[RMDB]
RNA sequence: GGGAACGACUCGAGUAGAGUCGAAAAGAUAUGGACUACCCACCCAUUUCCGACGACGAAGCGUUUCGGAAACGAAACGCAGAGUCGGUAGUGGAGGUCCUAAGUCAAAGACGUGUUCGCACGUCAAGUGAUGUGUUUAGUUCGCUAAACACAUCACAAAAGAAACAACAACAACAAC
Reactivity to DMS in 0.01 (KOAc 150mM, MgCl2 10mM, bicine 150mM(pH8.5), 24C), signal-to-noise 4, nucleotides 027 to 126: g020a090u000a200u010g010g010a020c010u000a160c010c010c020a300c110c000c000a010u000u000u000c000c010g000a010c010g030a160c280g020a140a090g000c010g020u010u000u000c000g010g000a060a060a100c000g010a000a000a000c000g010c000a010g000a130g010u000c010g000g010u000a000g030u000g000g000a110g030g010u000c000c000u000a070a120g010u000c120a070a090a100g010a000c010g050u000g000u000u010c180g020c000a010c000g020u010c010a070a070
Reactivity to 2A3 in 0.01 (KOAc 150mM, MgCl2 10mM, bicine 150mM(pH8.5), 24C), signal-to-noise 2, nucleotides 027 to 126: g030a020u160a090u200g000g000a000c010u180a200c040c010c020a030c000c020c000a020u040u020u020c010c020g020a010c040g040a090c050g040a110a010g000c000g000u000u000u000c000g000g000a050a050a000c000g010a000a000a000c000g030c000a000g010a000g000u000c000g000g010u000a000g010u000g010g000a040g010g000u000c000c010u090a300a090g150u160c120a130a060a030g010a000c010g000u010g030u040u140c300g010c000a000c000g020u010c010a000a000
The record gives the reactivity of an RNA of 177 nucleotides to DMS and 2A3. For 2A3 the reverse transcriptase was SuperScript II with manganese. It was measured as part of the RMDB library TTRDEL. Reactivities are given for positions 27 through 126.